[RMDB]
RNA sequence: GGGAACGACUCGAGUAGAGUCGAAAACUAUUUCAUCUAAUGAAUCAUGCCAUCUUUAAAUGUGCGCUUUUCAUGGGAGUAGGUAUUUUAGAUCAUGAAGCAGGUUCAAGGGAUAUACGAAUUUUAAGUCACACAACCGUUUCGACGGUUGUGUGACAAAAGAAACAACAACAACAAC
Reactivity to 2A3 in 0.01 (KOAc 150mM, MgCl2 10mM, bicine 150mM(pH8.5), 24C), signal-to-noise 1, nucleotides 027 to 126: c000u000a050u000u270u000c190a130u000c020u300a200a210u280g000a230a000u010c000a050u180g010c000c000a000u050c110u120u190u020a000a190a190u020g000u090g060c000g000c000u000u000u020u120c130a130u000g060g020g000a020g100u090a050g000g150u000a260u120u000u000u000a000g000a170u100c090a020u040g150a000a000g300c000a000g010g170u000u000c060a090a300g000g000g000a000u000a000u000a280c000g000a000a160u120u000u000u120a020a000

This 177-nucleotide RNA was probed chemically with 2A3. For 2A3 the reverse transcriptase was SuperScript II with manganese. Conditions: 150 mM KOAc, 10 mM MgCl2 and 150 mM bicine (pH 8.5), 24 C. It was measured as part of the RMDB library OK1LIB.